RNA sequence: GGGAACGACUCGAGUAGAGUCGAAAAUCGCGGUUGGCCGUGGUCGAGGUGUGGUGGUGGUAGCCAUUCGGUGUCGCCGUGGGCGUUUUUGCGGGUCUUCCAGCCUUUUUCGACAAGGCGAUUGUCGUCAAUUCGCAAAGUUCGCUUUGCGAAUUGAAAAAGAAACAACAACAACAAC
Reactivity to DMS in 0.01 (KOAc 150mM, MgCl2 10mM, bicine 150mM(pH8.5), 24C), signal-to-noise 2, nucleotides 027 to 126: u010c070g010c050g010g020u000u000g010g010c010c050g020u000g020g020u020c060g010a080g010g000u010g020u010g010g030u000g010g010u000g030g010u000a090g020c030c030a110u010u010c060g010g000u000g010u010c050g010c030c040g020u000g010g010g000c040g010u000u010u010u010u000g010c050g000g000g000u000c040u010u000c020c060a140g000c030c020u010u000u010u000u000c010g010a040c030a050a110g000g020c030g000a090u010u000g010u000c040g020

Structure probing data (DMS) for a 177-nucleotide construct. The reactions ran in a buffer of 150 mM KOAc, 10 mM MgCl2 and 150 mM bicine (pH 8.5), at 24 C. It was measured as part of the RMDB library OK2TST. Values cover nucleotides 27 to 126. The DMS profile rests on 4,812 reads.